[RMDB]
RNA sequence: GGGAACGACUCGAGUAGAGUCGAAAAAGUCACCUAUUACGAUAGGUGACAUUCGAACCAGCGAACAAUUCAGUUGCGAGAUUCGAGGUUUCAGUCUGAAUCAUAGUAGCCAUUACGAUGGCUACAACUCACUCCCGACUGUUCGCAGUCGGGAGAAGACUAUUCAAUCGUUCGCGAUUGAAUAGUCAAAAGAAACAACAACAACAAC
Reactivity to 2A3 in 0.01 (KOAc 150mM, MgCl2 10mM, bicine 150mM(pH8.5), 24C), signal-to-noise 4, nucleotides 027 to 156: a010g010u000c000a000c000c000u000a020u040u050a070c240g040a020u010a010g010g000u000g010a000c000a010u010u030c020g020a040a020c000c000a030g140c010g000a000a010c010a070a180u010u000c010a010g000u000u000g000c000g010a010g000a010u000u000c010g000a020g050g010u070u180u290c050a060g140u050c010u000g050a000a000u050c040a050u080a090g020u000a000g010c000c000a020u040u070a070c260g130a020u000g000g000c000u000a000c000a000a000c010u060c040a060c000u000c000c000c000g010a000c000u010g050u060u070c180g010c140a000g000u000c000g010g020g000a000g000a000a000
Reactivity to DMS in 0.01 (KOAc 150mM, MgCl2 10mM, bicine 150mM(pH8.5), 24C), signal-to-noise 1, nucleotides 027 to 156: a050g010u040c000a000c010c000u000a000u000u000a110c220g050a060u000a000g050g020u000g000a000c010a010u000u010c020g000a160a140c030c020a160g010c050g030a090a070c050a070a160u000u010c000a080g000u000u000g000c000g000a090g000a070u000u000c000g000a220g010g030u000u000u000c040a040g000u000c110u020g020a090a130u000c130a060u000a190g000u000a000g020c000c000a030u010u000a160c150g040a080u000g030g000c010u020a000c010a040a030c070u000c030a150c010u000c010c010c020g000a010c030u000g020u000u000c270g100c000a010g010u000c000g000g000g010a000g000a010a050

Description
An RNA of 207 nucleotides, treated with 2A3 and DMS and read out base by base. The reactions ran in a buffer of 150 mM KOAc, 10 mM MgCl2 and 150 mM bicine (pH 8.5), at 24 C. DMS adducts were read by reverse transcription with MarathonRT.